[RMDB]
Notes:
Structure probing data (DMS and 2A3) for a 177-nucleotide construct. As a SHAPE reagent, 2A3 marks flexible, mostly unpaired nucleotides at the ribose 2'-OH. The RNA was probed in 150 mM KOAc, 10 mM MgCl2 and 150 mM bicine (pH 8.5) at 24 C. Reactivities are given for positions 27 through 126.
RNA sequence: GGGAACGACUCGAGUAGAGUCGAAAACUCAGUGAGAAACUCUGGGCGACAAGCACGUACCAGCAGAGACACCCUGAGGUAGAGGCUAGUCAGUUUAUAACCUUGAAAGGGAGGUAGACUUUCGGGGACUAUGAUACAUUUUCGAAUGUAUCAUAGUAAAAGAAACAACAACAACAAC
Reactivity to DMS in 0.01 (KOAc 150mM, MgCl2 10mM, bicine 150mM(pH8.5), 24C), signal-to-noise 9, nucleotides 027 to 126: c010u000c000a040g010u010g000a090g000a110a130a140c040u000c010u000g000g000g010c020g010a090c070a140a120g020c150a070c020g010u000a100c010c010a040g000c120a020g000a070g000a250c100a110c040c030c010u000g000a040g000g010u030a060g000a100g010g000c030u010a040g000u000c050a070g000u000u010u010a060u010a070a140c010c010u000u020g000a020a030a040g000g000g010a080g010g010u020a060g000a060c020u000u000u000c010g000g000g000g000
Reactivity to 2A3 in 0.01 (KOAc 150mM, MgCl2 10mM, bicine 150mM(pH8.5), 24C), signal-to-noise 6, nucleotides 027 to 126: c000u000c010a000g010u040g080a110g020a060a060a020c010u000c000u020g000g000g010c010g010a060c050a110a020g050c050a030c050g010u050a250c000c000a010g030c060a000g010a010g030a020c010a030c010c010c000u000g000a000g010g010u040a020g010a010g020g000c000u020a000g020u060c040a010g000u010u030u020a160u040a040a040c000c000u030u060g050a040a020a000g040g050g030a080g060g060u060a030g040a050c000u010u020u010c010g000g000g000g000